Chemical mapping of a 207-nucleotide RNA with 2A3 and DMS.
RNA sequence: GGGAACGACUCGAGUAGAGUCGAAAAUGAACGCUUUCGAAGGAAAGCUUGACCAGCUAAUCUUCUGCAACGCCAUUACGUGGACUGCCCUUAGAGGCUCAUGGCGAUAGGUCACCCCGCCGGUCGGUUAAGAAUCAGCGAUUCGUCGCUGAUUCAAUCAAACCGUAGGUUUCGACCUACGGUUUGAAAAAGAAACAACAACAACAAC
Reactivity to 2A3 in 0.01 (KOAc 150mM, MgCl2 10mM, bicine 150mM(pH8.5), 24C), signal-to-noise 2, nucleotides 027 to 156: u150g010a070a040c090g070c040u020u160u130c090g070a060a030g050g020a120a060a010g020c000u010u060g010a010c010c010a000g000c000u000a070a130u080c070u150u010c030u120g060c020a060a090c030g010c020c010a030u090u090a070c130g060u160g020g060a090c060u070g010c030c000c000u090u150a130g050a090g160g000c010u050c060a030u020g020g000c000g010a030u050a050g000g000u010c010a040c000c010c000c010g040c040c030g050g010u090c020g010g020u070u080a200a030g000a010a000u000c000a000g000c000g030a010u020u040c100g030u000c010g140c000u000g000a000u000u000c000a000a000
Reactivity to DMS in 0.01 (KOAc 150mM, MgCl2 10mM, bicine 150mM(pH8.5), 24C), signal-to-noise 1, nucleotides 027 to 156: u000g000a140a030c080g020c010u000u020u000c030g020a130a060g040g010a040a100a040g010c010u010u000g000a060c100c040a180g000c020u000a070a130u000c010u010u000c060u000g010c040a100a100c000g080c000c010a060u000u010a070c080g060u010g010g000a060c050u000g010c000c010c040u000u010a090g060a110g040g050c010u010c030a040u000g020g030c000g020a090u010a000g030g000u000c010a180c040c040c010c050g040c060c030g020g040u000c020g060g010u010u020a060a140g000a020a020u000c030a010g000c010g000a050u000u010c270g020u000c010g040c000u000g010a020u000u000c000a050a140
For DMS the reverse transcriptase was MarathonRT. Conditions: 150 mM KOAc, 10 mM MgCl2 and 150 mM bicine (pH 8.5), 24 C. 2A3 adducts were read by reverse transcription with SuperScript II with manganese. For DMS, 2,674 sequencing reads were counted.